[RMDB]
RNA sequence: GGGAACGACUCGAGUAGAGUCGAAAAAAGUGAUUAUUCGUAAUCACUUCACGCCGGGCGCGGUGGCGCGUGCCUGUAGUCCCAGCAACUCGGGAGGCUAAACGACGUACCCGUUCGCGGGUACGAAGAAUAGUACACGUUUCGACGUGUACUAUUCAAAAGAAACAACAACAACAAC
Reactivity to 2A3 in 0.01 (KOAc 150mM, MgCl2 10mM, bicine 150mM(pH8.5), 24C), signal-to-noise 4, nucleotides 027 to 126: a010a000g000u010g010a020u010u030a010u040u100c200g040u070a010a000u000c000a000c000u040u040c100a090c080g000c010c000g000g000g000c010g000c000g010g010u010g010g000c000g000c010g010u010g010c000c000u010g030u040a020g020u000c000c010c000a010g000c040a100a220c030u070c110g010g010g000a000g020g000c040u090a110a080a030c080g120a020c000g000u000a000c000c000c000g010u020u040c300g010c020g020g010g000u000a000c000g010a010a000
Reactivity to DMS in 0.01 (KOAc 150mM, MgCl2 10mM, bicine 150mM(pH8.5), 24C), signal-to-noise 6, nucleotides 027 to 126: a020a010g000u000g010a010u000u000a020u000u010c170g020u000a010a010u000c000a000c000u000u000c090a100c170g000c020c000g010g010g010c010g010c000g010g010u010g010g000c020g010c020g010u000g010c010c000u000g010u000a040g010u000c000c010c000a030g020c020a210a130c030u010c080g000g010g010a030g000g010c010u000a020a050a100c120g010a210c010g010u000a010c000c000c000g010u000u010c180g020c010g010g000g010u000a000c000g000a030a080